[RMDB]
RNA sequence: GGGAACGACUCGAGUAGAGUCGAAAACAAGAGGUGAAUAUUUAGCGAAUCGUAUACAAGAUAAAAUUCAUCAAAUUGAGCAACAACGUAUACCUACUGGAACAAUUGAUAUUACAUACUUUAGAGAUCAUGUAAAGAGGUUCGCCUCUUUACAUGAAAAAGAAACAACAACAACAAC
Reactivity to DMS in 0.01 (KOAc 150mM, MgCl2 10mM, bicine 150mM(pH8.5), 24C), signal-to-noise 6, nucleotides 027 to 126: c060a110a060g020a130g010g030u010g010a040a020u000a080u000u000u000a050g010c060g010a090a080u010c140g000u000a040u000a050c070a090a120g000a090u000a040a050a080a040u000u000c020a020u000c050a040a070a110u000u000g020a070g000c100a020a050c080a060a060c160g010u000a040u000a040c030c060u000a060c110u000g000g010a080a050c100a050a070u010u000g000a060u000a050u010u000a060c040a050u010a060c090u000u000u000a080g010a170g000a110
Reactivity to 2A3 in 0.01 (KOAc 150mM, MgCl2 10mM, bicine 150mM(pH8.5), 24C), signal-to-noise 6, nucleotides 027 to 126: c040a030a030g030a030g030g020u030g020a030a020u090a120u140u080u040a050g030c030g080a090a050u050c050g030u070a050u020a110c030a040a010g020a040u100a040a070a020a030u050u030c010a000u010c020a040a090a130u140u120g020a020g040c020a010a040c000a010a040c070g040u050a020u040a090c000c020u030a040c060u090g050g040a050a020c020a060a070u080u090g030a020u050a040u150u100a050c030a040u100a110c030u080u120u070a090g020a000g030a090